[RMDB]
RNA sequence: GGGAACGACUCGAGUAGAGUCGAAAAAAAUUAAGCAAGAGAUAUAAGGCCGCUCCUUAUAUUGCGACUUGCUUAAACUUGUGACUGAAUAAUCAACGAUUUAACAAGUUCAAGUGGUUAAUAGCCAUAGAAGAAGGUGAUUCGUCACCUUCUUCUAAAAAGAAACAACAACAACAAC
Reactivity to DMS in 0.01 (KOAc 150mM, MgCl2 10mM, bicine 150mM(pH8.5), 24C), signal-to-noise 5, nucleotides 027 to 126: a030a040a080u000u000a000a000g010c000a000a000g000a300g010a030u000a010u000a020a000g000g010c300c210g040c200u040c000c000u000u010a000u000a000u000u000g010c180g010a120c000u000u000g000c000u000u000a010a020a050c020u010u000g000u010g000a030c090u000g000a120a060u010a050a030u010c110a090a110c210g000a070u010u000u010a090a070c100a100a040g000u000u010c090a050a050g030u010g000g000u000u000a090a060u020a120g000c010c030a100
Reactivity to 2A3 in 0.01 (KOAc 150mM, MgCl2 10mM, bicine 150mM(pH8.5), 24C), signal-to-noise 5, nucleotides 027 to 126: a000a000a020u070u020a000a000g000c000a000a000g000a010g000a010u000a000u000a020a000g010g030c080c030g040c080u200c040c000u000u000a000u010a000u020u050g080c060g130a100c010u000u000g000c000u000u000a010a010a010c010u020u030g040u080g080a050c030u040g050a080a080u140a140a040u090c040a050a100c080g030a040u000u040u110a060a050c040a030a010g030u050u070c050a070a020g020u030g040g020u030u010a040a030u050a130g010c010c020a010